[RMDB]
Structure probing data (DMS) for a 177-nucleotide construct. The RNA was probed in 150 mM KOAc, 10 mM MgCl2 and 150 mM bicine (pH 8.5) at 24 C. DMS adducts were read by reverse transcription with MarathonRT.
RNA sequence: GGGAACGACUCGAGUAGAGUCGAAAAGAUAUGGAUCAUGGCUAGCUCUGUGUCGGAAACGACAUCUAAGAGCUUGGACCCAUAUCCUAAGUCAAAAGGGACAAGGCACUUCGGUGCCUUGUCCCAAGUUACACGAUUCGUUCGCGAAUCGUGUAACAAAAGAAACAACAACAACAAC
Reactivity to DMS in 0.01 (KOAc 150mM, MgCl2 10mM, bicine 150mM(pH8.5), 24C), signal-to-noise 1, nucleotides 027 to 126: g000a040u030a040u000g000g000a000u010c020a180u000g060g020c120u000a040g040c000u000c010u010g000u010g030u000c010g030g000a120a080a230c010g010a000c000a030u000c200u010a100a050g010a020g020c000u000u000g000g030a030c130c010c000a010u000a020u000c000c010u000a090a090g010u000c070a050a070a140a090g030g000g010a020c020a010a000g000g020c000a000c000u010u030c270g060g030u010g020c000c000u010u010g000u000c030c010c010a000a000